[RMDB]
RNA sequence: GGGAACGACUCGAGUAGAGUCGAAAAAGAUCGUUUUGGUAUCACACAGAUAGUGUGUCGUGAGGACGAAAAACCUGAAUUACACCAGUUAGUUGAUUCUGUACGUUCAGAGUGGGUUUUAUCCAUAAUUUACAUGUACUUUCGAGUACAUGUAAAUAAAAGAAACAACAACAACAAC
Reactivity to DMS in 0.01 (KOAc 150mM, MgCl2 10mM, bicine 150mM(pH8.5), 24C), signal-to-noise 9, nucleotides 027 to 126: a070g010a130u010c030g010u000u000u010u000g020g020u010a090u010c020a020c020a030c010a170g010a150u010a110g020u000g010u000g010u000c100g010u010g010a100g010g010a030c020g010a040a060a050a090a060c050c010u000g000a060a040u000u000a060c080a080c150c050a080g000u000u010a100g010u000u000g000a100u000u000c050u000g010u000a060c200g010u010u000c030a030g000a120g020u000g000g000g010u000u010u010u010a090u010c020c010a070u010a070
Reactivity to 2A3 in 0.01 (KOAc 150mM, MgCl2 10mM, bicine 150mM(pH8.5), 24C), signal-to-noise 6, nucleotides 027 to 126: a000g070a070u020c040g000u030u000u050u110g110g030u140a050u140c000a010c010a010c000a010g190a300u280a200g090u030g020u010g010u030c020g040u100g170a040g040g030a010c030g010a090a010a010a000a000c000c010u020g040a030a030u070u050a030c040a040c060c030a040g060u110u110a070g030u130u180g070a120u130u000c000u020g050u030a030c050g040u000u040c020a020g050a040g090u080g030g020g010u070u060u110u120a070u030c010c010a030u080a170